[RMDB]
RNA sequence: GGGAACGACUCGAGUAGAGUCGAAAACAGCAAAAAGGAACCGAUUCCCACCAAGUUCGGAAAGAGAUACCGGGCGAGGCGCUGAAGAAAGAAUCUCGCUUCAGACACCCCAAGGACUAGACUGAAGAAUGCACGCCAUCGUUCGCGAUGGCGUGAACAGUACAUUGAUGUUCGCAUCAAUGUACUGAAAAGAAACAACAACAACAAC
Reactivity to DMS in 0.01 (KOAc 150mM, MgCl2 10mM, bicine 150mM(pH8.5), 24C), signal-to-noise 1, nucleotides 027 to 156: c020a130g030c080a030a050a080a060a140g000g020a060a190c040c020g000a180u010u000c000c010c000a110c010c060a120a240g060u040u000c000g050g020a060a060a100g000a200g020a110u000a090c010c020g040g000g040c110g020a180g000g000c020g020c020u010g000a040a050g000a040a060a070g000a200a110u000c040u010c020g000c000u040u000c000a010g000a230c000a060c010c020c010c010a120a110g020g000a050c040u000a100g010a150c000u000g000a080a100g000a070a050u010g010c050a010c000g010c010c030a010u000c000g020u020u010c170g010c000g050a010u000g010g040c000g000u010g020a000a000
Reactivity to 2A3 in 0.01 (KOAc 150mM, MgCl2 10mM, bicine 150mM(pH8.5), 24C), signal-to-noise 3, nucleotides 027 to 156: c030a000g030c030a040a070a050a100a000g130g020a060a030c060c020g050a100u030u060c030c000c020a020c000c040a030a040g010u020u030c010g030g030a100a140a010g080a030g000a010u040a090c020c000g020g010g000c030g010a020g010g020c080g010c020u060g050a060a040g060a060a200a020g060a060a110u040c050u020c090g030c050u000u000c010a050g030a070c040a090c020c040c010c060a050a070g060g010a030c070u060a040g020a050c010u020g000a020a000g040a070a040u130g070c000a000c010g000c000c010a000u000c000g030u050u030c130g010c010g120a000u000g000g000c000g000u000g000a000a000
Description:
Structure probing data (DMS and 2A3) for a 207-nucleotide construct. The RNA was probed in 150 mM KOAc, 10 mM MgCl2 and 150 mM bicine (pH 8.5) at 24 C. The DMS profile rests on 1,540 reads. Source: RMDB library M2RFPK, as collected in RNAgym. The 2A3 profile rests on 1,996 reads.